[RMDB]
RNA sequence: GGGAACGACUCGAGUAGAGUCGAAAAGAAAACAAGUACCGAGAACAUUGUUUUCGCUGCUUGGCGUUGCCGUUUUGUGUUGCAGUUGGUUGGGUAACGCCGCAAAUACCAACAGAACAGACAGAUACGCUAAAUACCAUUUCGAUGGUAUUUAGCGAAAAGAAACAACAACAACAAC
Reactivity to DMS in 0.01 (KOAc 150mM, MgCl2 10mM, bicine 150mM(pH8.5), 24C), signal-to-noise 4, nucleotides 027 to 126: g000a130a020a110a080c010a030a020g000u000a000c300c030g000a040g000a020a030c050a140u010u020g010u000u000u000u000c010g000c180u000g020c000u000u000g030g020c050g000u000u010g010c000c010g050u020u020u010u000g020u010g010u010u000g010c170a140g010u010u010g000g000u000u010g000g010g040u000a060a140c300g000c020c010g010c090a010a050a060u040a010c010c010a000a000c020a110g000a060a130c110a100g000a080c140a050g010a120u050a100
Reactivity to 2A3 in 0.01 (KOAc 150mM, MgCl2 10mM, bicine 150mM(pH8.5), 24C), signal-to-noise 4, nucleotides 027 to 126: g030a000a010a000a000c020a000a000g030u050a070c050c080g040a030g000a070a030c100a300u120u230g010u000u010u020u010c020g000c030u030g010c010u040u050g010g010c010g020u020u030g020c010c020g050u070u020u120u100g220u030g040u070u120g070c100a100g000u020u060g100g010u060u140g080g010g000u010a020a000c020g010c030c000g000c010a020a060a000u180a010c000c000a020a020c000a010g080a090a070c020a000g150a020c020a020g070a080u130a190
Annotation: Structure probing data (DMS and 2A3) for a 177-nucleotide construct. For DMS, 5,236 sequencing reads were counted. DMS adducts were read by reverse transcription with MarathonRT.